[RMDB]
This 177-nucleotide RNA was probed chemically with DMS. For DMS, 2,530 sequencing reads were counted. DMS adducts were read by reverse transcription with MarathonRT. Source: RMDB library OK2TRN, as collected in RNAgym.
RNA sequence: GGGAACGACUCGAGUAGAGUCGAAAAUCGCACGCGGCCGUACGAGCGUACUGAUCCAUCGUAUAGAUGCGCGUACGUCGUACGGCCGCUCGCAGUACGGAUCCUCGUACUCUCUGACGAUCCGAGGCGUGCAUCAAGACUUCGGUCUUGAUGCACGAAAAGAAACAACAACAACAAC
Reactivity to DMS in 0.01 (KOAc 150mM, MgCl2 10mM, bicine 150mM(pH8.5), 24C), signal-to-noise 3, nucleotides 027 to 126: u000c060g010c030a070c180g010c020g000g000c010c000g010u000a000c010g010a060g020c010g020u010a010c030u010g020a160u000c140c000a010u000c000g010u030a150u000a110g010a000u000g010c200g060c160g000u000a010c000g030u000c010g020u000a000c000g000g020c010c000g010c010u000c020g000c060a080g030u000a050c020g000g000a100u020c110c080u010c010g010u000a090c130u010c080u010c060u000g010a040c160g000a040u010c040c000g020a160g020g040